[RMDB]
RNA sequence: GGGAACGACUCGAGUAGAGUCGAAAAAAAGAUAUGGACCUGGAACUACGUCCGAAACAAGCGAAGAACUUUACUCGGAAACGAGUAAAGGGAGCUUGAGAUAGCUGACGCCAGGUCCUAAGUCAAACAAUAAUGAGCUGUUCGCAGCUCAUUAUUGAAAAGAAACAACAACAACAAC
Reactivity to DMS in 0.01 (KOAc 150mM, MgCl2 10mM, bicine 150mM(pH8.5), 24C), signal-to-noise 4, nucleotides 027 to 126: a060a070a120g000a030u000a190u010g000g000a020c000c010u000g000g000a130a070c120u020a300c040g020u000c010c020g020a190a140a100c010a020a000g000c020g010a100a160g000a110a170c000u000u000u000a000c000u000c010g000g000a020a040a050c000g010a010g010u000a000a020a020g010g000g000a040g010c000u000u000g000a060g020a120u010a200g020c230u010g000a040c020g010c030c010a010g020g000u000c000c010u010a000a050g000u000c030a120a090a170
Reactivity to 2A3 in 0.01 (KOAc 150mM, MgCl2 10mM, bicine 150mM(pH8.5), 24C), signal-to-noise 3, nucleotides 027 to 126: a000a000a010g030a020u050a020u050g000g000a000c000c000u010g010g020a080a030c130u200a060c300g000u000c010c010g030a040a110a020c000a000a000g020c010g300a300a020g020a020a090c000u000u000u000a000c000u000c000g000g020a000a010a010c000g000a000g000u020a000a000a010g000g010g000a010g010c010u020u010g000a060g070a070u220a030g100c210u070g020a000c010g000c010c000a000g000g000u000c000c000u000a000a000g000u000c000a020a060a040